[RMDB]
An RNA of 207 nucleotides, treated with DMS and 2A3 and read out base by base. 2A3 is a SHAPE reagent: it acylates the 2'-hydroxyl of flexible nucleotides of all four kinds. For 2A3 the reverse transcriptase was SuperScript II with manganese.
RNA sequence: GGGAACGACUCGAGUAGAGUCGAAAAUACCUCUUCGGAGGUACAAGGGAUAUGGACAAGCGGGCACAGGCUAUGAAGUCACAGUAGGUCGGAAACGACCUAUCACAGUGGAGCCUGGAUCGCUUGUCCUAAGUCGAGGUACGGGUUUCGACCCGAAGAUACUAUGCAGGUUCGCCUGCAUAGUAUCAAAAGAAACAACAACAACAAC
Reactivity to DMS in 0.01 (KOAc 150mM, MgCl2 10mM, bicine 150mM(pH8.5), 24C), signal-to-noise 2, nucleotides 027 to 156: u000a010c000c000u000c000u000u000c230g000g060a120g040g050u000a010c040a140a130g040g010g010a150u010a220u000g000g030a050c030a030a010g030c010g000g030g040c110a160c020a000g010g010c020u000a200u000g000a170a170g000u010c060a040c070a300g000u000a040g000g000u000c030g030g000a160a080a300c050g000a040c000c010u000a000u010c070a080c100a210g000u000g020g000a070g010c000c000u000g020g000a070u000c020g020c030u000u000g000u000c000c000u000a000a030g020u020c070g020a090g020g070u000a060c010g020g000g020u000u000u000c170g020a140c000c000c010g020a040a180
Reactivity to 2A3 in 0.01 (KOAc 150mM, MgCl2 10mM, bicine 150mM(pH8.5), 24C), signal-to-noise 4, nucleotides 027 to 156: u030a000c000c000u030c020u030u050c250g190g020a030g000g020u010a030c030a010a050g120g030g030a040u060a050u130g010g000a000c010a000a000g000c020g030g010g020c270a040c000a120g000g000c000u040a100u300g230a230a050g110u200c000a000c000a030g010u000a000g000g000u010c020g010g030a050a070a070c000g010a000c010c010u010a010u060c040a060c030a010g030u020g000g030a000g000c000c000u000g010g000a010u020c010g000c000u010u000g000u000c000c000u000a000a000g000u010c010g010a040g060g050u120a050c030g050g000g000u030u100u230c160g110a040c000c010c010g000a020a020